RNA sequence: GGGAACGACUCGAGUAGAGUCGAAAACGUUAAAUACAGCACAAUAUAUGAUCGCGUAUGCGAGAGUAGUGCCAACAUAUUGUGCUAAUGAGUGCCUCUCGUUAUCUGUCUUAUAUUACCGCAAACACAUACGGGUGAGGUUCGCCUCACCCGUAUGAAAAGAAACAACAACAACAAC
Reactivity to 2A3 in 0.01 (KOAc 150mM, MgCl2 10mM, bicine 150mM(pH8.5), 24C), signal-to-noise 2, nucleotides 027 to 126: c010g040u100u130a120a100a040u170a080c090a010g010c020a000c010a030a030u020a010u010a000u090g060a060u070c010g000c020g130u200a090u290g000c020g000a010g020a020g020u080a020g060u030g070c050c000a050a000c020a040u040a020u030u040g010u000g010c010u070a060a070u150g040a030g020u060g000c000c000u020c020u010c000g010u060u000a070u040c020u020g140u000c030u060u140a100u040a040u120u060a040c060c010g030c040a090a110a000c040a020
Reactivity to DMS in 0.01 (KOAc 150mM, MgCl2 10mM, bicine 150mM(pH8.5), 24C), signal-to-noise 3, nucleotides 027 to 126: c100g020u010u010a030a110a110u000a130c190a020g020c010a020c010a010a010u010a040u000a080u020g000a180u000c030g020c010g000u010a080u010g020c000g000a020g030a240g020u000a050g010u010g030c130c060a060a070c150a040u000a020u000u010g010u000g000c000u000a070a050u010g010a080g020u000g040c030c010u010c030u000c050g000u000u000a050u000c050u000g000u000c040u000u000a090u000a090u000u000a130c050c070g020c170a050a080a060c210a140